Structure probing data (DMS) for a 177-nucleotide construct. The RNA was probed in 150 mM KOAc, 10 mM MgCl2 and 150 mM bicine (pH 8.5) at 24 C. DMS adducts were read by reverse transcription with MarathonRT.

[RMDB]
RNA sequence: GGGAACGACUCGAGUAGAGUCGAAAAGGUAGCGGUACAUUCCCCACCCGCGCAUGCACAAUCUCAUCGGCAAUAACCCACUGAAAUUUAAUCGCAUCUGCUCCCGCGCGUGCGGCAGCCUCUAUCAUCAGGGAAUUGUUUUCGAACAAUUCCCUGAAAAAGAAACAACAACAACAAC
Reactivity to DMS in 0.01 (KOAc 150mM, MgCl2 10mM, bicine 150mM(pH8.5), 24C), signal-to-noise 1, nucleotides 027 to 126: g000g000u000a080g020c060g000g010u010a120c080a180u000u040c010c000c000c090a240c170c030c010g010c020g030c080a060u010g030c020a120c080a100a070u000c050u010c020a060u010c050g020g000c010a040a050u040a060a100c040c010c030a050c120u010g020a050a150a090u010u000u040a030a170u000c110g030c040a080u010c030u000g030c050u000c030c050c030g030c070g010c080g000u000g020c010g000g020c100a020g000c030c050u000c030u010a030u000c160a080